The data come from the RNA Mapping Database (RMDB), library OK2TRN. Structure probing data (DMS and 2A3) for a 177-nucleotide construct. For 2A3, 7,702 sequencing reads were counted. 2A3 is a SHAPE reagent: it acylates the 2'-hydroxyl of flexible nucleotides of all four kinds.
RNA sequence: GGGAACGACUCGAGUAGAGUCGAAAAGUGGCCUUGGUUGCCAGGCUAGCCAGGUCCGAUCCCGCGCCCGGCUCGGAGAACAGCUGGCACCAGAAAAUGUCGCCUCGGAACGUUGGCGGCAGGAGGCACGCAUGGUUAAAUUCGUUUAACCAUGCGUAAAAGAAACAACAACAACAAC
Reactivity to DMS in 0.01 (KOAc 150mM, MgCl2 10mM, bicine 150mM(pH8.5), 24C), signal-to-noise 6, nucleotides 027 to 126: g010u010g010g010c010c010u000u000g030g020u010u000g020c010c010a030g000g010c020u000a050g000c020c010a040g000g000u010c060c020g000a110u000c010c010c000g020c300g010c020c010c010g000g000c030u000c080g010g000a160g000a110a130c280a100g010c010u000g000g010c010a060c010c020a100g010a060a050a100a100u010g020u000c020g010c000c000u000c020g010g010a150a110c160g000u010u000g010g010c000g010g010c010a000g000g010a050g000g010c070
Reactivity to 2A3 in 0.01 (KOAc 150mM, MgCl2 10mM, bicine 150mM(pH8.5), 24C), signal-to-noise 2, nucleotides 027 to 126: g130u120g060g000c020c000u040u080g030g010u150u140g020c010c000a030g050g090c030u020a010g000c010c020a020g020g000u000c000c000g030a090u020c000c000c000g000c010g000c000c010c000g040g000c020u040c070g250g030a220g050a180a050c030a040g030c000u010g000g000c010a000c000c000a010g080a010a160a010a020u030g010u010c000g000c010c010u020c040g040g220a300a140c140g070u080u090g000g000c000g000g010c000a000g010g020a030g020g030c030

About this RNA: Conditions: 150 mM KOAc, 10 mM MgCl2 and 150 mM bicine (pH 8.5), 24 C.